Chemical mapping of a 177-nucleotide RNA with DMS and 2A3. The DMS profile rests on 1,911 reads. For DMS the reverse transcriptase was MarathonRT. Source: RMDB library OK1LIB, as collected in RNAgym.
RNA sequence: GGGAACGACUCGAGUAGAGUCGAAAACUAUUUAUAGACAGAACAGUGGAAAACGUAUAUCGCUAUAAACCUUAUACACCGAGUCUUCCAGUCGUACAAUUCCACAUAGGCGAGGCAUAAGCGAAAGCCUACGAUCCCAGUUCGCUGGGAUCGUAGGAAAAGAAACAACAACAACAAC
Reactivity to DMS in 0.01 (KOAc 150mM, MgCl2 10mM, bicine 150mM(pH8.5), 24C), signal-to-noise 2, nucleotides 027 to 126: c020u020a050u000u000u000a070u000a030g000a080c160a010g000a100a050c080a070g040u030g000g030a050a080a040a060c170g000u000a020u000a000u000c100g020c010u020a070u060a020a100a100c030c040u000u000a060u010a060c060a080c100c040g000a090g040u000c020u000u000c000c000a120g020u000c070g000u000a070c220a050a220u020u010c000c020a040c100a160u020a070g000g010c000g000a050g020g000c140a120u020a050a070g000c030g000a100a060a170g000
Reactivity to 2A3 in 0.01 (KOAc 150mM, MgCl2 10mM, bicine 150mM(pH8.5), 24C), signal-to-noise 2, nucleotides 027 to 126: c060u040a080u020u060u010a180u090a020g050a040c050a070g080a240a010c050a060g020u080g010g080a060a070a050a050c000g000u020a070u000a000u140c060g030c040u060a020u070a180a020a020c000c050u060u000a030u000a100c010a020c030c050g020a000g030u000c000u010u000c010c000a000g040u110c040g000u100a070c060a020a020u040u040c040c000a000c050a070u030a030g030g070c020g000a000g020g000c050a030u010a130a000g010c030g060a130a000a030g010